RNA sequence: GGGAACGACUCGAGUAGAGUCGAAAAGAUAUGGAACCCUGCGGGAGCUGAUCGGAAACGAUACCAGCGAAGAACGCAGGGUUCCUAAGUCAAAAGCUCCUACACAAGUUCGCUUGUGUAGGAGCAACCCUUUACUAGAGUUCGCUCUAGUAAAGGGAAAAGAAACAACAACAACAAC
Reactivity to DMS in 0.01 (KOAc 150mM, MgCl2 10mM, bicine 150mM(pH8.5), 24C), signal-to-noise 3, nucleotides 027 to 126: g000a050u000a300u000g000g000a020a010c000c000c000u000g020c000g010g000g000a100g020c000u000g000a040u010c000g020g010a090a100a190c010g000a010u000a120c300c010a010g000c000g020a110a140g020a110a170c010g010c010a020g000g000g000u000u000c000c010u000a000a080g010u000c020a070a080a140a150g010c000u000c000c000u000a010c000a010c000a000a010g000u000u010c220g010c010u000u000g000u010g010u000a000g000g000a000g020c010a010a020
Reactivity to 2A3 in 0.01 (KOAc 150mM, MgCl2 10mM, bicine 150mM(pH8.5), 24C), signal-to-noise 1, nucleotides 027 to 126: g000a010u110a020u130g010g000a020a000c000c010c000u010g010c000g000g000g030a030g030c000u010g000a020u010c000g020g040a090a020a010c000g010a000u070a260c090c070a010g010c010g090a110a040g000a000a040c010g000c010a000g020g000g000u000u000c000c000u000a000a010g000u000c000a010a000a000a090g010c020u000c000c000u020a000c000a000c000a000a040g110u230u270c210g150c280u020u020g000u010g000u020a000g010g020a000g020c000a000a000
Structure probing data (DMS and 2A3) for a 177-nucleotide construct. The data come from the RNA Mapping Database (RMDB), library TTRDEL. 2A3 adducts were read by reverse transcription with SuperScript II with manganese. For DMS the reverse transcriptase was MarathonRT. For DMS, 3,540 sequencing reads were counted. The 2A3 profile rests on 2,631 reads.